[RMDB]
RNA sequence: GGGAACGACUCGAGUAGAGUCGAAAACAUCGUGAUCGCGCACGGCGCGGCCGUGCAUGAGCUGAGCGCGUACGAGGCCCGAUCGGCGCAGACGGCCGCGAGCAUCUAUGAUCGUACCUGGCCGCGCGGUCGCGUAAGGGUUCGCCCUUACGCGACCAAAAGAAACAACAACAACAAC
Reactivity to 2A3 in 0.01 (KOAc 150mM, MgCl2 10mM, bicine 150mM(pH8.5), 24C), signal-to-noise 1, nucleotides 027 to 126: c030a110u090c050g050u060g040a060u090c050g000c010g030c050a030c060g080g010c090g010c000g080g060c020c020g040u110g000c030a070u070g010a000g020c060u110g050a060g010c030g010c020g030u040a120c150g050a070g000g100c000c000c000g020a110u090c040g000g000c020g000c040a010g040a080c030g000g000c000c000g000c000g000a010g020c000a040u060c070u170a160u230g040a060u030c030g000u050a060c050c010u100g040g060c060c040g000c000g000c000
Reactivity to DMS in 0.01 (KOAc 150mM, MgCl2 10mM, bicine 150mM(pH8.5), 24C), signal-to-noise 1, nucleotides 027 to 126: c130a070u000c080g010u000g030a040u000c060g010c030g000c030a140c110g000g030c010g020c050g000g010c020c020g030u010g040c080a100u010g000a060g040c000u000g000a050g020c080g020c150g000u000a090c090g000a110g000g000c010c030c010g010a070u000c020g000g010c060g050c060a090g010a050c110g010g010c010c010g020c030g000a100g000c070a090u000c110u010a090u020g020a050u000c070g000u000a100c030c050u010g050g020c020c070g010c060g020c050

Notes
This 177-nucleotide RNA was probed chemically with 2A3 and DMS. As a SHAPE reagent, 2A3 marks flexible, mostly unpaired nucleotides at the ribose 2'-OH. For 2A3, 1,181 sequencing reads were counted. The DMS profile rests on 1,207 reads. For 2A3 the reverse transcriptase was SuperScript II with manganese. Source: RMDB library OK2TRN, as collected in RNAgym.